[RMDB]
RNA sequence: GGGAACGACUCGAGUAGAGUCGAAAACGGCUUCUGAUACUACCGCCGGGGCCUCGGCCAUAACCCACCAGACGGCUCGGCACCGCCGCCUGCUCUUUACCUACCCGGAUGGCUCUAAGGUAUUUGCAAAUUGAAUUACGUUCGCGUAAUUCAAUUUAAAAGAAACAACAACAACAAC
Reactivity to DMS in 0.01 (KOAc 150mM, MgCl2 10mM, bicine 150mM(pH8.5), 24C), signal-to-noise 4, nucleotides 027 to 126: c090g010g020c030u000u010c080u010g000a150u020a050c080u000a090c070c050g020c060c050g040g010g000g010c030c050u000c090g020g010c070c050a090u000a100a120c030c010c020a120c150c060a100g000a050c060g010g010c030u000c050g010g000c030a050c070c070g010c050c060g010c040c020u010g000c030u000c030u000u000u000a060c040c030u000a110c060c010c010g010g010a100u000g010g000c030u000c040u010a090a090g010g020u000a060u000u000u010g010c200
Reactivity to 2A3 in 0.01 (KOAc 150mM, MgCl2 10mM, bicine 150mM(pH8.5), 24C), signal-to-noise 2, nucleotides 027 to 126: c010g030g000c030u080u030c050u150g100a130u070a270c050u020a050c040c020g060c000c000g000g000g050g040c010c010u040c060g040g010c010c020a040u080a100a090c010c000c010a010c020c010a020g000a100c040g040g000c010u000c020g040g000c040a030c050c060g050c020c000g000c000c010u020g030c010u000c000u050u100u030a070c000c020u020a060c000c000c020g060g070a070u020g020g000c020u030c030u060a070a030g090g000u060a080u040u110u070g050c020
The record gives the reactivity of an RNA of 177 nucleotides to DMS and 2A3. Source: RMDB library OK2TRN, as collected in RNAgym. 2A3 adducts were read by reverse transcription with SuperScript II with manganese. The reactions ran in a buffer of 150 mM KOAc, 10 mM MgCl2 and 150 mM bicine (pH 8.5), at 24 C.